Description: This 177-nucleotide RNA was probed chemically with DMS and 2A3. Conditions: 150 mM KOAc, 10 mM MgCl2 and 150 mM bicine (pH 8.5), 24 C. The 2A3 profile rests on 16,773 reads. For DMS the reverse transcriptase was MarathonRT. Values cover nucleotides 27 to 126. For DMS, 6,298 sequencing reads were counted.
RNA sequence: GGGAACGACUCGAGUAGAGUCGAAAAAGAAAUCGACGCAAGCGAAGAUAAAAGCGGAACGGUAACCGCAAUACCGUACGGUCAUGGCACGCGAAAGCGAUAGACCGAAACAUGCCAUACAAAAAAAGUAUGUAUCAUUGUUCGCAAUGAUACAUACAAAAGAAACAACAACAACAAC
Reactivity to DMS in 0.01 (KOAc 150mM, MgCl2 10mM, bicine 150mM(pH8.5), 24C), signal-to-noise 6, nucleotides 027 to 126: a080g010a080a100a050u000c040g010a180c050g020c100a060a100g020c030g020a080a120g010a070u000a070a060a130a120g010c010g000g010a080a220c040g010g000u010a030a090c030c030g000c080a080a060u000a290c010c000g010u000a170c050g010g000u000c050a040u000g010g010c030a290c020g000c010g000a060a060a070g000c000g010a110u000a060g000a060c000c000g000a060a080a080c150a040u000g010c020c010a040u010a050c140a010a000a030a070a060a070a090
Reactivity to 2A3 in 0.01 (KOAc 150mM, MgCl2 10mM, bicine 150mM(pH8.5), 24C), signal-to-noise 7, nucleotides 027 to 126: a000g110a020a070a020u050c030g040a040c040g020c120a080a070g060c020g060a030a020g030a110u100a110a160a030a020g040c010g000g000a020a010c000g020g010u050a070a060c010c010g040c070a030a010u010a020c000c010g010u030a020c020g000g000u020c030a030u030g010g000c020a000c040g020c000g040a080a010a000g000c000g010a020u110a120g030a010c020c010g030a020a010a000c030a010u060g010c010c000a010u050a100c090a020a080a010a010a000a000a020